[RMDB]
RNA sequence: GGGAACGACUCGAGUAGAGUCGAAAAGGGGCCGAUAAAUUGGUACUAGACUUGUCUGGGAGGAUAAAAACACUGACUUGAUCAUCGGCUGGCCCCCGCAAGUCAUUGUAUAGGCUAACACGCGUUCCCUGGGAGUGAUAUUCGUAUCACUCCCAGGAAAAGAAACAACAACAACAAC
Reactivity to DMS in 0.01 (KOAc 150mM, MgCl2 10mM, bicine 150mM(pH8.5), 24C), signal-to-noise 2, nucleotides 027 to 126: g050g040g020g000c000c040g010a090u000a020a050a070u010u060g060g000u020a080c070u010a080g000a020c120u000u000g010u010c060u020g040g060g030a030g030g040a130u000a030a050a080a170a130c050a120c030u000g000a000c020u000u030g000a130u040c160a180u030c000g000g000c040u000g000g030c000c020c230c040c030g030c000a020a000g000u000c000a030u000u000g010u000a040u010a050g000g030c120u000a050a050c120a030c100g000c050g000u010u000c050
Reactivity to 2A3 in 0.01 (KOAc 150mM, MgCl2 10mM, bicine 150mM(pH8.5), 24C), signal-to-noise 5, nucleotides 027 to 126: g070g000g010g000c050c010g020a040u110a140a140a030u180u120g050g020u020a040c040u030a040g030a030c030u070u090g050u040c050u160g000g010g020a170g040g030a050u180a120a220a030a020a000c000a000c050u020g030a010c000u020u100g020a060u180c140a040u120c040g020g000c050u010g020g010c000c000c000c000c000g020c000a010a000g000u000c010a040u010u170g030u030a070u080a110g020g020c020u040a100a020c070a010c090g120c050g050u030u060c010